Chemical mapping of a 207-nucleotide RNA with 2A3 and DMS.
RNA sequence: GGGAACGACUCGAGUAGAGUCGAAAAGGCGUAGCCCCUGUUCAGACAGGAGUAAUCCCAGCUGAAACAGGGUUUUCACCCUUCCUUUCUUCUGGUUUCCUUCCUCUGCUUCAGCGGCCUCGCCCGGAACCUCUUGACCAGCGCAGGUGCUGACGCGCCAUCUAAGCAAGUUCGCUUGCUUAGAUGGAAAAGAAACAACAACAACAAC
Reactivity to 2A3 in 0.01 (KOAc 150mM, MgCl2 10mM, bicine 150mM(pH8.5), 24C), signal-to-noise 4, nucleotides 027 to 156: g020g000c020g010u020a000g010c000c000c000c010u000g020u000u000c010a020g010a090c150a110g000g000a000g020u050a020a040u060c010c010c010a010g020c010u010g010a020a030a080c300a250g040g000g000u130u030u130u140c050a030c010c000c000u030u030c000c000u010u010u010c000u010u000c010u000g010g000u020u020u010c000c000u020u050c000c010u040c010u040g090c170u030u020c000a000g000c010g030g000c000c010u010c000g010c010c000c000g000g060a060a070c020c020u070c080u170u200g090a100c040c010a030g010c010g000c090a090g030g140u160g110c060u060g040a070c030g000c020g000
Reactivity to DMS in 0.01 (KOAc 150mM, MgCl2 10mM, bicine 150mM(pH8.5), 24C), signal-to-noise 1, nucleotides 027 to 156: g020g040c020g010u010a210g040c060c020c030c000u010g000u020u000c050a050g030a060c020a050g000g060a040g020u000a080a050u000c100c000c010a110g030c020u000g020a030a040a060c090a080g020g000g050u000u010u010u000c150a110c000c000c010u000u010c060c020u000u010u000c030u010u000c010u000g010g010u010u000u010c010c000u030u010c080c050u010c000u010g040c150u010u000c010a020g030c210g030g020c040c030u000c020g040c060c020c020g000g010a140a180c060c020u010c060u010u000g020a220c030c020a100g000c050g000c080a100g000g000u010g000c020u000g000a040c070g020c000g040

Notes: DMS adducts were read by reverse transcription with MarathonRT. Reactivities are rounded to 0.1 and cut off at 0 and 3. For DMS, 2,753 sequencing reads were counted.